[RMDB]
RNA sequence: GGGAACGACUCGAGUAGAGUCGAAAAUUAAAGUACGUAGAAGCGGCGUGAAGCAUGUAGAAAGCUUUGCGAGCAUAUCGAGCUACAUGUGAGCGAAAGCGGUUACGUACAACGUUAUGCAAAAAAACGUUAGUCUCACUUUCGAGUGAGACUAACGAAAAGAAACAACAACAACAAC
Reactivity to DMS in 0.01 (KOAc 150mM, MgCl2 10mM, bicine 150mM(pH8.5), 24C), signal-to-noise 2, nucleotides 027 to 126: u000u000a050a100a220g010u000a000c010g000u000a020g010a070a150g030c000g000g030c040g040u000g010a140a260g000c000a000u000g000u010a010g000a060a140a160g010c070u000u000u000g020c110g010a050g000c150a110u030a080u000c110g000a080g010c010u000a020c010a010u030g000u000g010a270g010c000g000a000a050a170g000c000g020g000u000u000a010c000g010u000a000c010a090a130c120g020u000u010a030u000g000c180a000a000a100a060a040a050a130
Reactivity to 2A3 in 0.01 (KOAc 150mM, MgCl2 10mM, bicine 150mM(pH8.5), 24C), signal-to-noise 2, nucleotides 027 to 126: u070u000a070a010a040g010u000a000c010g000u000a010g000a110a010g040c030g060g000c020g000u040g030a050a010g000c020a000u000g000u020a020g010a140a160a000g020c010u050u150u160g120c090g020a010g010c010a020u080a040u250c080g020a030g040c000u010a000c010a010u020g150u160g000a040g020c010g020a130a040a020g000c000g000g020u070u000a010c000g000u000a000c010a000a010c020g050u090u070a080u140g080c080a000a070a000a090a050a000a020
An RNA of 177 nucleotides, treated with DMS and 2A3 and read out base by base. The reactions ran in a buffer of 150 mM KOAc, 10 mM MgCl2 and 150 mM bicine (pH 8.5), at 24 C. For DMS, 1,381 sequencing reads were counted.